[RMDB]
RNA sequence: GGGAACGACUCGAGUAGAGUCGAAAACCCGGGGCACCCACAACUUCUCGGAGGAGCUCAAGAUCGGGGAGGGUGGCUUUGGGUGCGUGUACCGGGCGGUGAUGAGGAACACGGUGUAUGCUGUGAAUACAGCGGAGAGGUUCGCCUCUCCGCUGUAAAAAGAAACAACAACAACAAC
Reactivity to DMS in 0.01 (KOAc 150mM, MgCl2 10mM, bicine 150mM(pH8.5), 24C), signal-to-noise 1, nucleotides 027 to 126: c020c020c000g040g010g060g020c030a010c010c000c040a080c040a080a050c040u000u000c010u010c020g000g020a060g010g010a150g000c080u020c140a150a150g000a130u000c020g010g020g010g000a060g010g000g040u000g000g000c210u000u020u000g010g000g020u000g000c040g020u000g010u020a100c060c030g000g010g000c040g000g020u010g000a060u000g000a120g010g000a130a140c020a050c060g000g020u000g020u010a060u010g030c030u000g030u000g000a180a090